[RMDB]
RNA sequence: GGGAACGACUCGAGUAGAGUCGAAAACAGUGUCCUUCCUGAAGUUAUGUGAACUUCCAGAUCUCUGUUCUGUUUAUUGGGUGUGUAAGCCAGCAGUGGCUCAGACUGCAGGACUUGAGGAAACCACAUUCCUCAGGUCAUUCGUGACCUGAGGAAUAAAAGAAACAACAACAACAAC
Reactivity to 2A3 in 0.01 (KOAc 150mM, MgCl2 10mM, bicine 150mM(pH8.5), 24C), signal-to-noise 2, nucleotides 027 to 126: c030a070g020u010g050u080c030c000u000u040c000c000u020g010a030a000g020u020u100a120u120g180u060g080a030a030c000u030u050c030c020a100g020a260u050c030u000c000u020g000u070u000c010u010g090u060u100u070a120u150u270g130g000g000u160g040u000g030u090a030a020g010c030c000a030g000c000a040g070u000g030g010c010u000c000a060g010a060c010u030g010c010a050g000g050a020c000u050u070g040a050g020g080a050a050a000c060c000a060c030
Reactivity to DMS in 0.01 (KOAc 150mM, MgCl2 10mM, bicine 150mM(pH8.5), 24C), signal-to-noise 2, nucleotides 027 to 126: c120a060g000u010g000u000c030c090u000u000c070c010u000g010a040a030g000u010u000a120u000g010u000g000a160a060c030u000u000c030c150a120g010a110u010c030u000c040u000g010u000u000c030u000g010u000u000u010a080u010u010g020g030g000u000g000u010g010u020a070a100g020c010c010a040g010c190a090g000u000g000g010c030u000c080a080g000a080c030u010g010c080a050g000g000a040c020u000u010g020a010g020g000a050a050a110c100c040a020c130